[RMDB]
RNA sequence: GGGAACGACUCGAGUAGAGUCGAAAAAGCUGGGAGUACAGGCACCUGCCACCACGCCAAGCUAAUUUUUGUAUGUUUAGUAGAGACGGGGUUUCACCAUGUUGGUCGGGCUGGUCUCGAACUCCUGACUAGGAAACCUGUUCGCAGGUUUCCUAGUAAAAGAAACAACAACAACAAC
Reactivity to DMS in 0.01 (KOAc 150mM, MgCl2 10mM, bicine 150mM(pH8.5), 24C), signal-to-noise 1, nucleotides 027 to 126: a090g040c060u010g000g000g000a060g010u000a070c170a090g020g000c130a070c080c080u000g000c010c010a090c050c070a050c040g040c000c000a070a160g000c030u020a000a070u000u000u000u010u030g020u000a040u020g020u000u000u000a030g000u000a090g040a140g000a050c030g020g010g030g020u000u000u000c070a050c020c020a130u010g000u010u000g010g020u000c120g010g010g000c050u030g030g010u000c040u000c040g010a070a040c100u000c010c000u000g010